RNA sequence: GGGAACGACUCGAGUAGAGUCGAAAAUAAAAGAGCCACUAUCACUAUUACGAGAAGGCGAUCCCUCAGGAACAACAAUUUUAGGACGACCAGCCGCUUUUUGCAGUCCCUGGCUUUUAUUAUGAGGGGUAGGGAGCACGUUCGCGUGCUCCCUACCAAAAGAAACAACAACAACAAC
Reactivity to 2A3 in 0.01 (KOAc 150mM, MgCl2 10mM, bicine 150mM(pH8.5), 24C), signal-to-noise 1, nucleotides 027 to 126: u000a000a060a020a000g020a000g100c000c000a130c180u000a130u000c110a030c000u180a000u130u300a060c150g000a000g000a130a000g000g000c000g000a020u000c000c000c000u000c200a060g090g000a030a000c000a080a030c000a030a180u250u220u290u000a000g000g020a000c080g020a080c020c020a020g110c000c000g000c080u150u170u000u020u000g210c000a000g000u000c000c000c000u050g000g000c000u090u180u000u000a080u300u050a020u130g150a160g110g060